[RMDB]
RNA sequence: GGGAACGACUCGAGUAGAGUCGAAAAACUGGGGGCAACCGCGUUCACCCACUCCGCGGGAUACUUCGUUACUUUCAUGACCGGCAAUUCGCAGCGCGCGGUGCUGGGAUUGUUUGGGGACGACGCGCUAUCCAAAGAUAUUCGUAUCUUUGGAUAGAAAAGAAACAACAACAACAAC
Reactivity to DMS in 0.01 (KOAc 150mM, MgCl2 10mM, bicine 150mM(pH8.5), 24C), signal-to-noise 8, nucleotides 027 to 126: a090c070u020g000g000g000g000g000c120a070a060c050c020g010c020g000u000u020c080a170c010c020c020a080c090u010c100c030g010c070g000g000g000a090u030a060c070u010u010c040g010u010u010a080c070u010u010u010c050a060u010g000a300c010c010g000g020c020a020a030u020u020c030g010c020a090g000c100g020c110g020c060g010g020u010g010c030u000g000g000g020a060u010u000g010u000u000u010g020g010g000g000a070c060g020a050c120g010c100g000
Reactivity to 2A3 in 0.01 (KOAc 150mM, MgCl2 10mM, bicine 150mM(pH8.5), 24C), signal-to-noise 9, nucleotides 027 to 126: a000c060u070g020g000g000g020g010c020a050a020c020c010g010c010g030u060u070c080a100c020c020c000a040c040u070c030c020g020c020g000g020g020a050u090a130c030u030u060c020g060u070u060a080c030u060u090u100c050a060u100g060a050c010c000g010g000c010a050a080u150u140c070g020c210a080g060c050g020c040g020c040g150g020u030g000c010u010g000g010g010a020u020u030g070u040u060u150g020g010g030g010a020c040g010a010c010g010c000g000